RNA sequence: GGGAACGACUCGAGUAGAGUCGAAAAGUUUGGCCAGCCCAAUGCCGCCUCAUCGCCCAAUGGCAGUAGUUACCACAACAACUAUAGCCUCAAUGGCAAUGGUAACUCGAAUGGCGCCGGUUCGGGACUCACGCACUAAUUUCGAUUAGUGCGUGAGAAAAGAAACAACAACAACAAC
Reactivity to DMS in 0.01 (KOAc 150mM, MgCl2 10mM, bicine 150mM(pH8.5), 24C), signal-to-noise 2, nucleotides 027 to 126: g000u000u000u000g040g000c030c070a110g000c000c010c030a110a140u000g040c110c010g000c070c010u000c050a040u000c060g010c000c000c070a070a100u000g010g020c080a120g060u000a010g010u000u000a020c020c030a100c200a070a160c280a090a040c090u000a110u000a180g000c000c010u010c270a020a100u000g010g010c000a060a070u000g000g000u000a030a010c000u000c030g000a090a050u010g000g030c040g040c050c070g000g020u010u000c070g000g020g000a300
Reactivity to 2A3 in 0.01 (KOAc 150mM, MgCl2 10mM, bicine 150mM(pH8.5), 24C), signal-to-noise 2, nucleotides 027 to 126: g030u040u100u120g050g030c010c000a050g000c150c030c030a000a020u100g010c000c000g000c010c000u040c030a090u070c060g010c010c010c000a090a060u140g010g000c040a030g020u090a000g000u000u000a020c000c000a030c020a270a000c010a020a070c170u120a080u100a250g000c010c010u060c150a160a230u270g010g030c000a010a030u040g010g000u010a030a000c000u000c030g060a110a090u090g070g010c040g000c030c040g050g000u070u070c060g000g010g010a030

An RNA of 177 nucleotides, treated with DMS and 2A3 and read out base by base. The data come from the RNA Mapping Database (RMDB), library OK2TST. For 2A3, 1,682 sequencing reads were counted.